[RMDB]
RNA sequence: GGGAACGACUCGAGUAGAGUCGAAAAGAAAGAAAGAAAGAAAUCCCACGAGGAGUCCUAAGUUAUUGCUUAACCUUUGCUAUGUAAGGGUUGGGUGUUUUAGGUGAUUGCCUCUUCUCUGUGCUAACGUGUUACCUAAGUUCGCUUAGGUAACACGAAAAGAAACAACAACAACAAC
Reactivity to 2A3 in 0.01 (KOAc 150mM, MgCl2 10mM, bicine 150mM(pH8.5), 24C), signal-to-noise 5, nucleotides 027 to 126: g080a010a060a020g080a050a100a010g150a090a140a000g080a010a080a030u050c000c010c030a000c030g010a010g020g020a010g070u060c000c000u010a050a060g070u140u140a180u160u290g010c000u010u010a000a020c000c000u060u010u050g020c040u210a120u300g030u040a040a000g000g000g010u010u000g000g030g000u050g040u040u060u010u010a050g020g010u090g090a150u040u260g110c000c040u020c000u040u060c120u000c050u080g070u060g080c080u070a060a040
Reactivity to DMS in 0.01 (KOAc 150mM, MgCl2 10mM, bicine 150mM(pH8.5), 24C), signal-to-noise 3, nucleotides 027 to 126: g020a130a080a100g000a070a080a140g000a100a080a080g000a060a110a110u000c040c020c010a160c160g000a020g000g000a090g000u000c000c010u000a000a010g000u010u020a040u040u020g000c000u010u010a010a010c000c000u000u000u000g000c010u040a070u010g020u000a010a010g010g010g030u000u000g010g000g000u000g000u030u010u000u000a010g010g020u020g000a080u050u040g020c010c000u000c010u000u010c020u000c030u000g000u010g010c080u000a070a260